Chemical mapping of a 207-nucleotide RNA with DMS and 2A3. 2A3 is a SHAPE reagent: it acylates the 2'-hydroxyl of flexible nucleotides of all four kinds. The data come from the RNA Mapping Database (RMDB), library RNAMAK. For 2A3, 2,215 sequencing reads were counted. DMS (dimethyl sulfate) methylates the pairing face of unpaired adenines and cytosines.
[RMDB]
RNA sequence: GGGAACGACUCGAGUAGAGUCGAAAACAUCGUUCGCGAUGAGAAAGCCGUAGGCAGCUGUUUGACGCAGGGACGAAGAACAUUCAUUCGAAAGAGUGAAUGGGAGUCCCUGACCCGUUGAUAGCUGCCUAAACGGAGCGCCAGCAUUCGUGCUGAAACCCUUAAAAGCAUUCGUGCUUUUAAGGGUAAAAGAAACAACAACAACAAC
Reactivity to DMS in 0.01 (KOAc 150mM, MgCl2 10mM, bicine 150mM(pH8.5), 24C), signal-to-noise 1, nucleotides 027 to 156: c020a040u000c040g020u000u000c260g000c020g020a020u000g010a110g000a050a040a070g000c000c010g020u000a050g010g020c040a020g030c010u000g010u000u020u010g070a040c010g000c010a060g000g040g000a030c000g020a080a210g010a170a110c000a020u000u000c000a020u000u000c000g020a180a100a300g010a030g040u000g000a000a000u000g000g010g000a260g000u000c000c020c000u000g000a010c160c090c070g000u010u030g020a030u000a010g030c000u000g000c000c010u000a000a000a080c010g000g010a080g000c050g020c030c000a010g000c000a130u000u000c170g060u000g030c010u010g000a060a090
Reactivity to 2A3 in 0.01 (KOAc 150mM, MgCl2 10mM, bicine 150mM(pH8.5), 24C), signal-to-noise 3, nucleotides 027 to 156: c000a020u030c010g070u080u060c280g030c020g120a040u040g030a090g190a180a170a020g040c020c010g000u010a010g010g000c000a000g010c010u020g150u150u140u300g060a010c000g020c020a000g000g000g010a000c000g090a240a040g030a040a000c000a000u000u000c000a000u000u000c010g040a110a080a060g000a070g020u010g010a000a010u010g000g010g000a030g000u010c000c020c000u000g010a020c000c000c010g020u000u000g000a000u000a000g000c000u000g010c000c000u000a000a000a000c010g030g000a070g080c060g100c040c010a000g000c000a020u070u140c160g200u100g030c050u140g040a250a090